[RMDB]
RNA sequence: GGGAACGACUCGAGUAGAGUCGAAAAGAUAUGGAUCAAUUACGUUCUCUAGCGUGACGCCAGGGUAAGUGGUCGGAAACGACCACGAAACCUGGAACUACGUUCGGGACGUAAUUGAUCCUAAGUCCAAUGCAUGCUACUUCGGUAGCAUGCAUUGAAAAGAAACAACAACAACAAC
Reactivity to DMS in 0.01 (KOAc 150mM, MgCl2 10mM, bicine 150mM(pH8.5), 24C), signal-to-noise 2, nucleotides 027 to 126: g000a110u000a300u010g000g020a030u000c000a000a010u000u000a020c000g000u010u020c010u000c010u000a050g030c030g010u030g000a100c300g000c010c000a020g010g020g000u000a110a300g000u010g020g020u000c010g000g000a090a070a260c000g020a010c000c000a000c020g020a030a110a110c000c000u000g000g000a030a100c030u000a000c010g010u000u000c250g000g020g000a000c010g000u000a000a000u000u000g000a000u000c000c010u000a000a040g000u010c050

The data come from the RNA Mapping Database (RMDB), library TTRINS. The record gives the reactivity of an RNA of 177 nucleotides to DMS. Reactivities are rounded to 0.1 and cut off at 0 and 3. The reactions ran in a buffer of 150 mM KOAc, 10 mM MgCl2 and 150 mM bicine (pH 8.5), at 24 C. Values cover nucleotides 27 to 126.